This 177-nucleotide RNA was probed chemically with DMS and 2A3. Reactivities are given for positions 27 through 126. For DMS, 3,431 sequencing reads were counted. It was measured as part of the RMDB library M2PK50.
RNA sequence: GGGAACGACUCGAGUAGAGUCGAAAAUCAGGCAACUUCGGUUGCCUGAAAAUAAACUCGCCUAUAGCCAGGCGAGUACCAAAGCGGCUAAAGGAAUGGAAAAAACUGCCUCGUUCGCGAGGCAGAAGUUACCAUCCUAGUUCGCUAGGAUGGUAACAAAAGAAACAACAACAACAAC
Reactivity to DMS in 0.01 (KOAc 150mM, MgCl2 10mM, bicine 150mM(pH8.5), 24C), signal-to-noise 4, nucleotides 027 to 126: u000c010a000g010g010c000a000a010c010u000u010c160g020g010u000u000g000c010c010u000g000a000a020a060a090u010a090a130a220c010u000c000g010c010c000u000a120u010a130g010c100c100a090g010g010c000g040a020g000u000a050c060c030a040a060a070g020c140g000g010c020u000a030a120a110g010g010a070a070u010g010g000a010a050a070a060a070a130c000u000g010c010c000u000c010g010u010u020c210g020c000g000a000g000g000c000a000g000a020a040
Reactivity to 2A3 in 0.01 (KOAc 150mM, MgCl2 10mM, bicine 150mM(pH8.5), 24C), signal-to-noise 4, nucleotides 027 to 126: u010c000a000g000g000c000a000a000c010u030u070c200g110g000u000u000g000c010c000u000g000a000a000a000a000u070a000a040a000c000u000c000g000c000c000u110a090u070a090g050c010c020a010g010g000c000g000a010g050u010a010c000c000a020a020a010g130c060g030g000c030u060a080a050a070g160g050a150a120u230g060g070a110a080a020a010a030a050c000u000g000c010c000u000c010g010u030u040c240g000c010g070a000g000g000c000a000g000a000a000